[RMDB]
RNA sequence: GGGAACGACUCGAGUAGAGUCGAAAAGCAUGGCCCAGGCCGGCCGGCCCAGGAUCCAGGCCAUAGGCCCGUACGGCGCUGCGAUCGCGAUCGGAUCGCGCUCUAGGCCAGUGACGAUCGAUCUGCGACUGCCCCUCUCAUUCGUGAGAGGGGCAGUAAAAGAAACAACAACAACAAC
Reactivity to DMS in 0.01 (KOAc 150mM, MgCl2 10mM, bicine 150mM(pH8.5), 24C), signal-to-noise 1, nucleotides 027 to 126: g000c100a160u000g020g040c030c020c040a020g000g000c000c020g010g050c070c110g010g000c010c020c050a170g040g000a080u000c060c010a180g000g000c010c000a160u020a170g000g000c070c000c050g020u010a110c070g000g020c020g030c040u020g020c050g000a040u000c000g030c000g000a000u000c040g050g010a110u020c000g050c020g020c030u000c040u010a170g000g010c140c250a070g010u000g000a200c040g050a070u000c030g000a040u000c000u010g030c020g000